Source: RMDB library M2PK50, as collected in RNAgym. An RNA of 177 nucleotides, treated with 2A3 and DMS and read out base by base. For DMS, 1,529 sequencing reads were counted. For 2A3, 1,996 sequencing reads were counted. Values are in units of 0.01, from 0 to 300, in steps of 10. Conditions: 150 mM KOAc, 10 mM MgCl2 and 150 mM bicine (pH 8.5), 24 C.
[RMDB]
RNA sequence: GGGAACGACUCGAGUAGAGUCGAAAAGAAGACAACUUCGGUUGUCUUCAAGGGGCUGUUUUUCUCGCUGACUUUCAGCCCAAAACAAAAGACUCAGCAAAACGAGACUACCCUUCGGGGUAGUCAAACUUUAAUCAGCUUUCGAGCUGAUUAAAGUAAAAGAAACAACAACAACAAC
Reactivity to 2A3 in 0.01 (KOAc 150mM, MgCl2 10mM, bicine 150mM(pH8.5), 24C), signal-to-noise 1, nucleotides 027 to 126: g000a000a010g000a010c000a000a000c010u060u120c200g080g000u000u000g000u000c010u000u000c000a010a020g060g000g000g010c010u010g010u010u000u000u050u050c070u100c120g010c010u010g030a020c020u040u030u020c020a010g010c020c010c080a070a030a010a020c010a010a020a000a000g030a010c010u000c030a010g000c000a010a040a030a040c050g040a010g000a180c000u000a010c000c010c000u020u030c220g030g030g010g000u010a000g000u030c000a000a000
Reactivity to DMS in 0.01 (KOAc 150mM, MgCl2 10mM, bicine 150mM(pH8.5), 24C), signal-to-noise 2, nucleotides 027 to 126: g000a030a010g000a010c000a000a000c000u000u000c220g020g000u000u000g000u000c000u010u000c010a070a100g050g020g000g010c010u000g000u000u010u000u000u030c040u020c220g000c040u000g010a050c130u000u000u000c010a010g000c030c000c030a040a020a030a170c090a020a010a040a000g000a050c130u000c000a010g000c010a140a050a090a110c220g020a230g010a010c000u000a010c000c000c000u000u030c220g040g010g010g000u000a010g000u000c010a000a030